An RNA of 207 nucleotides, treated with 2A3 and read out base by base. For 2A3, 811 sequencing reads were counted. The reactions ran in a buffer of 150 mM KOAc, 10 mM MgCl2 and 150 mM bicine (pH 8.5), at 24 C. The data come from the RNA Mapping Database (RMDB), library M2RFPK.

RNA sequence: GGGAACGACUCGAGUAGAGUCGAAAACCAGCUUGCCUGUGUCCUAGGGAAUUGGAAGGUCAUCCUUCACAGGAUCGUGUGGAAGUCCUGCUCGGGGCGGAAGCAUUAAAACCAUUCGAGCUAAUCAAAAACCGGCUGAUCUUCGGAUCAGCCGGAAGAGAAGUCUAUACUUCGGUAUAGACUUCUCAAAAGAAACAACAACAACAAC
Reactivity to 2A3 in 0.01 (KOAc 150mM, MgCl2 10mM, bicine 150mM(pH8.5), 24C), signal-to-noise 2, nucleotides 027 to 156: c000c010a000g060c030u030u070g040c000c000u030g000u040g010u080c040c030u030a040g010g030g030a120a180u190u120g040g060a160a030g040g030u130c010a010u070c020c000u090u040c040a020c020a050g030g020a040u060c080g000u030g030u020g060g020a040a030g030u000c020c030u070g060c030u040c140g000g020g000g000c000g010g010a030a000g030c020a000u020u170a040a070a050a110c050c010a060u070u090c020g000a000g020c060u190a140a070u190c090a110a120a110a040a080c000c010g000g000c000u000g010a000u000c000u060u060c240g100g000a000u000c000a000g020c000c000g000g000a000a000